[RMDB]
RNA sequence: GGGAACGACUCGAGUAGAGUCGAAAACACACUUCCCGGGAAGUGUGGCCUAACCCCGGUUAGGGACCGCUCCGGGCACAGCUAGCAGGAAGAGACUGGGAGCCCUGACUGGCGGGAUGGAUCGUAUGAUCAGCUGCCAGACAGAUCUAGCGUGCAACAUCAGCUGCAUGUUCGCAUGCAGCUGAUGAAAAGAAACAACAACAACAAC
Reactivity to 2A3 in 0.01 (KOAc 150mM, MgCl2 10mM, bicine 150mM(pH8.5), 24C), signal-to-noise 2, nucleotides 027 to 156: c000a020c000a000c010u110u080c000c000c000g000g030g000a040a030g000u010g010u010g050g050c010c000u010a010a000c000c030c050c100g100g010u000u010a000g020g000g000a020c000c040g020c060u050c030c000g000g010g000c000a030c000a030g000c020u000a010g010c000a060g000g130a130a110g040a040g040a180c040u030g000g130g030a060g030c020c000c000u020g010a040c000u010g000g000c000g000g050g010a070u100g180g010a010u010c050g060u300a110u300g000a010u010c000a010g050c000u020g010c010c000a010g030a040c000a000g010a020u060c000u010a020g000c040g020u020g000c070a180a100